[RMDB]
RNA sequence: GGGAACGACUCGAGUAGAGUCGAAAAGGGUUUAUUCUGUUAUUAAGACAAAGGCAUCAUGGCCUUUGGGUGAGAGGCCCGUAUGUGUUUGGGAUUUGGCAAUCAGCAUUCCAUCUCUGUCAUCACCCCCGCCCGAUAAAUUCGUUUAUCGGGCGGGAAAAGAAACAACAACAACAAC
Reactivity to 2A3 in 0.01 (KOAc 150mM, MgCl2 10mM, bicine 150mM(pH8.5), 24C), signal-to-noise 1, nucleotides 027 to 126: g110g020g000u170u050u000a060u000u060c000u000g180u170u070a300u180u030a070a020g000a000c000a000a000a000g040g000c080a030u040c070a020u300g240g000c000c080u000u010u010g000g000g000u030g010a040g000a040g000g080c000c000c080g030u060a150u030g030u000g030u000u000u030g010g000g010a090u090u110u090g020g020c000a140a040u020c010a100g100c050a000u020u000c000c020a110u090c020u000c010u010g090u100c040a090u020c000a030c010c000

Chemical mapping of a 177-nucleotide RNA with 2A3. The RNA was probed in 150 mM KOAc, 10 mM MgCl2 and 150 mM bicine (pH 8.5) at 24 C. Source: RMDB library OK1LIB, as collected in RNAgym. Reactivities are given for positions 27 through 126.